[RMDB]
RNA sequence: GGGAACGACUCGAGUAGAGUCGAAAAGGGGUCCACAUCGAUCGAUUCCCAGCAUCGAUCUACACUGAAGCCUCCACGGUGUAGGGAGCUGAACAUCGGGAGUGGACGGAGGCACCCAAAAGCUCUUGCGUCGAUCUUCGGAUCGACGCAAGAGCAACAUCGUACACUCGUUCGCGAGUGUACGAUGAAAAGAAACAACAACAACAAC
Reactivity to 2A3 in 0.01 (KOAc 150mM, MgCl2 10mM, bicine 150mM(pH8.5), 24C), signal-to-noise 1, nucleotides 027 to 156: g070g010g030g030u050c030c010a020c040a070u300c010g000a010u010c010g010a000u080u120c130c210c020a020g000c010a010u300c020g000a010u010c000u000a000c000a000c010u030g020a110a030g010c020c000u000c010c000a010c010g000g000u000g000u000a000g010g000g030a010g000c000u000g010a160a030c050a050u020c000g000g010g010a080g010u000g000g000a010c020g010g000a010g010g000c010a030c000c000c000a000a110a030a030g020c000u000c000u020u000g000c000g070u000c000g000a000u000c000u060u090c300g140g020a030u000c000g000a000c000g000c000a000a000g000a000g020c000a000a000